[RMDB]
RNA sequence: GGGAACGACUCGAGUAGAGUCGAAAAAUGCUAAAGGAAGACGGCGACCACUCAUGGAUGUAACGGCAUUGUGGGCGUCAUUCCUUUGUUACCUCAGUGCGGUGUCUGCAUGUCUUACACUUGGUCGUCGUUAAUAAGGGUUCGCCCUUAUUAACGAAAAAGAAACAACAACAACAAC
Reactivity to DMS in 0.01 (KOAc 150mM, MgCl2 10mM, bicine 150mM(pH8.5), 24C), signal-to-noise 9, nucleotides 027 to 126: a070u010g010c050u010a020a040a050g000g010a060a050g000a080c110g010g010c010g010a030c010c000a150c180u000c170a070u000g010g010a090u000g010u000a060a080c230g010g000c020a020u000u010g020u000g010g000g000c020g010u000c020a100u000u000c130c010u000u000u000g010u010u000a070c050c020u000c100a070g010u010g010c110g010g000u000g010u000c030u000g010c030a050u000g000u000c020u000u010a040c070a050c080u000u000g010g010u000c050g010
Reactivity to 2A3 in 0.01 (KOAc 150mM, MgCl2 10mM, bicine 150mM(pH8.5), 24C), signal-to-noise 9, nucleotides 027 to 126: a000u130g010c040u070a060a000a010g050g020a030a030g080a030c070g010g030c010g020a010c010c010a020c020u130c060a070u130g080g100a090u040g100u160a160a070c130g080g000c030a020u030u100g000u010g010g000g000c000g000u010c010a060u020u030c000c000u010u000u030g020u020u060a050c010c010u040c040a040g040u050g090c030g020g030u030g020u020c020u040g020c030a080u090g070u020c020u040u070a030c040a020c020u030u060g060g000u050c030g010